RNA sequence: GGGAACGACUCGAGUAGAGUCGAAAAUAAAACACGUAACGUGAGCACAGUCGGUAGUGCAGCAGGACCGAAACCUGCAGCGAAAGGGAUCAAGACCCUGUUCGCGCUAAAACCGAAGAAAAAAAAACCUUAAAACAGUGUUCGCACUGUUUUAAGGAAAAGAAACAACAACAACAAC
Reactivity to DMS in 0.01 (KOAc 150mM, MgCl2 10mM, bicine 150mM(pH8.5), 24C), signal-to-noise 2, nucleotides 027 to 126: u040a020a030a140a080c000a020c030g000u000a110a120c120g020u000g010a180g010c010a020c010a030g000u000c000g000g010u000a010g010u010g010c000a060g050c020a010g000g010a070c050c110g000a120a050a060c010c000u000g010c050a240g000c020g010a010a100a020g000g040g010a120u010c190a090a160g030a060c010c000c000u000g010u000u010c010g010c000g000c190u000a000a010a030a030c000c000g000a010a200g050a010a010a010a010a050a050a070a080a120
Reactivity to 2A3 in 0.01 (KOAc 150mM, MgCl2 10mM, bicine 150mM(pH8.5), 24C), signal-to-noise 2, nucleotides 027 to 126: u080a000a050a030a030c020a010c020g120u180a280a030c110g000u070g060a000g000c030a010c000a010g010u000c000g020g000u010a030g020u020g000c020a010g000c010a000g040g030a090c030c090g040a050a010a000c000c000u000g000c000a010g000c000g020a020a010a020g010g000g000a030u140c110a050a040g130a170c000c000c010u020g180u010u030c000g010c000g010c110u120a050a010a020a020c020c000g000a000a050g120a030a000a000a000a000a000a000a000a000
The data come from the RNA Mapping Database (RMDB), library M2PK90. This 177-nucleotide RNA was probed chemically with DMS and 2A3. Reactivities are given for positions 27 through 126. The RNA was probed in 150 mM KOAc, 10 mM MgCl2 and 150 mM bicine (pH 8.5) at 24 C.